[RMDB]
An RNA of 207 nucleotides, treated with 2A3 and read out base by base. Reactivities are given for positions 27 through 156. The reactions ran in a buffer of 150 mM KOAc, 10 mM MgCl2 and 150 mM bicine (pH 8.5), at 24 C.
RNA sequence: GGGAACGACUCGAGUAGAGUCGAAAAGCGAUGCCUUCGGGCAUCGCAAAAACCGUAGGAAUGUCGUCACCUUCAUCGAUCACAGAUUCGAAAGAGUCUGUGGGAGAAGCGUGACGAGCAUUCCUAAACGGAAAAAACACGCACUUCGGUGCGUGAAGUAUCGUUCAGUGUUCGCACUGAACGAUACAAAAGAAACAACAACAACAAC
Reactivity to 2A3 in 0.01 (KOAc 150mM, MgCl2 10mM, bicine 150mM(pH8.5), 24C), signal-to-noise 1, nucleotides 027 to 156: g000c000g000a020u010g040c030c000u070u140c300g000g000g010c000a010u000c000g030c000a010a000a000a010a000c010c000g000u010a000g010g010a000a000u010g010u040c000g010u000c000a000c020c030u020u000c020a300u300c070g070a020u040c000a000c000a000g000a000u020u000c010g040a130a090a030g000a040g010u030c000u010g000u000g000g020g000a030g000a000a000g120c160g010u000g000a000c000g000a000g000c000a000u010u000c000c010u000a020a050a010c000g000g140a070a030a000a020a000a000c010a000c010g000c000a000c010u000u130c300g070g000u000g000c000g000u010g020a010a000